Structure probing data (DMS and 2A3) for a 177-nucleotide construct.
The 2A3 profile rests on 2,226 reads.
It was measured as part of the RMDB libraries RFM100 and RFMREP.
DMS adducts were read by reverse transcription with MarathonRT.
Values are in units of 0.01, from 0 to 300, in steps of 10.

RNA sequence: GGGAACGACUCGAGUAGAGUCGAAAAUUUGAGCAUCCUGAGCCCUGAGGCUGUUUCUGGUGGUGGACCUCCUCCUCCUCAGUAGGGAUGGGUAGAGGAAGCAGCUAGAGGCCUUGGCAGUGAGGAAUUUGUGUACACGUUUCGACGUGUACACAAAAAAAGAAACAACAACAACAAC
Reactivity to DMS in 0.01 (KOAc 150mM, MgCl2 10mM, bicine 150mM(pH8.5), 24C), signal-to-noise 3, nucleotides 027 to 126: u000u020u040g000a100g000c040a100u000c030c010u000g010a170g030c050c170c300u010g010a060g020g000c030u030g010u000u020u040c000u000g010g060u020g010g010u000g000g000a210c020c010u000c000c030u000c000c010u000c000c010u000c100a130g000u020a160g000g000g000a020u010g010g000g000u000a090g000a060g010g000a140a170g000c020a130g000c010u010a040g000a080g000g000c010c010u010u000g000g000c070a100g020u040g000a070g020g000a070a170
Reactivity to 2A3 in 0.01 (KOAc 150mM, MgCl2 10mM, bicine 150mM(pH8.5), 24C), signal-to-noise 4, nucleotides 027 to 126: u140u100u180g060a060g020c050a120u050c000c000u070g030a050g020c030c000c060u040g010a040g000g010c010u030g070u060u140u020c000u010g020g000u070g100g240u070g060g140a160c010c000u000c000c000u030c010c010u010c000c010u070c080a230g050u300a100g050g010g000a040u100g030g000g040u130a040g010a020g000g000a000a010g020c000a010g000c000u000a000g000a010g000g020c000c010u010u000g040g000c050a090g070u040g080a020g000g060a030a060